[RMDB]
This 177-nucleotide RNA was probed chemically with 2A3 and DMS. The RNA was probed in 150 mM KOAc, 10 mM MgCl2 and 150 mM bicine (pH 8.5) at 24 C. It was measured as part of the RMDB library OK2TRN. For 2A3 the reverse transcriptase was SuperScript II with manganese.
RNA sequence: GGGAACGACUCGAGUAGAGUCGAAAACAUGUGAAAUACGGAAUUCCAUUAGCAAAAUAGAUGAUUCUCGGCAUUAGAAGAAUGAUUCUGUAUUCUUAAGGCCUAGAGCAAAGAUGCCAACGGUGUGGUGUAAGAUCGAGUUCGCUCGAUCUUACACAAAAGAAACAACAACAACAAC
Reactivity to 2A3 in 0.01 (KOAc 150mM, MgCl2 10mM, bicine 150mM(pH8.5), 24C), signal-to-noise 1, nucleotides 027 to 126: c030a080u150g070u040g160a070a030a000u090a060c010g060g010a020a030u090u000c040c010a000u110u140a030g040c050a010a050a050a120u070a060g120a090u110g010a060u170u010c040u040c000g040g040c020a040u080u160a070g050a150a000g040a060a060u050g060a030u160u000c020u060g080u050a000u000u050c000u020u090a110a000g050g080c010c010u010a020g000a010g020c000a080a100a000g070a020u060g000c000c000a000a000c090g010g000u090g040u100g190
Reactivity to DMS in 0.01 (KOAc 150mM, MgCl2 10mM, bicine 150mM(pH8.5), 24C), signal-to-noise 2, nucleotides 027 to 126: c130a060u010g010u020g000a060a060a020u020a070c070g020g000a050a080u010u000c130c010a040u000u030a060g000c100a050a060a110a160u000a050g000a030u000g010a120u010u000c020u000c080g000g000c050a050u000u000a100g000a100a040g010a080a050u010g010a060u000u000c110u000g010u000a000u000u020c040u020u000a090a130g010g000c000c000u000a030g010a070g000c050a070a060a090g000a120u000g000c020c010a060a080c120g010g010u000g010u000g010